An RNA of 177 nucleotides, treated with DMS and 2A3 and read out base by base. The RNA was probed in 150 mM KOAc, 10 mM MgCl2 and 150 mM bicine (pH 8.5) at 24 C. Reactivities are given for positions 27 through 126. The data come from the RNA Mapping Database (RMDB), library RFMREP.
[RMDB]
RNA sequence: GGGAACGACUCGAGUAGAGUCGAAAACAGAAAAGACAAGAUGAGAAAGUGCAGUAUUGACUGUCUUCAAACGCACCUGUCCUUGCUCAAGUGCUGGGAUUGUGUGCCAACGGCUAUGAUAGAUAUGCAUGAUGUCAGAGUUCGCUCUGACAUCAUGAAAAGAAACAACAACAACAAC
Reactivity to DMS in 0.01 (KOAc 150mM, MgCl2 10mM, bicine 150mM(pH8.5), 24C), signal-to-noise 3, nucleotides 027 to 126: c040a140g000a100a040a050a070g010a040c090a110a050g020a120u000g020a150g000a060a050a060g020u010g000c020a050g000u000a130u020u010g000a140c070u000g000u000c030u000u000c090a040a080a170c270g010c000a020c000c020u000g000u000c010c000u000u000g000c010u000c170a160a090g010u000g020c010u000g000g000g000a030u000u000g000u020g000u000g000c000c060a060a070c090g000g010c080u000a090u020g020a050u020a080g010a130u000a080u010g010
Reactivity to 2A3 in 0.01 (KOAc 150mM, MgCl2 10mM, bicine 150mM(pH8.5), 24C), signal-to-noise 4, nucleotides 027 to 126: c010a000g140a040a120a040a030g050a030c050a030a050g050a170u160g020a030g090a150a080a010g070u160g080c020a000g020u060a140u120u200g130a080c010u030g010u060c020u030u040c030a040a060a030c060g030c000a000c000c010u000g000u000c010c000u000u030g020c020u080c140a200a120g090u080g120c020u020g020g030g000a000u000u060g070u010g000u010g160c000c010a070a030c010g050g000c040u100a070u140g100a060u070a100g070a030u080a030u220g060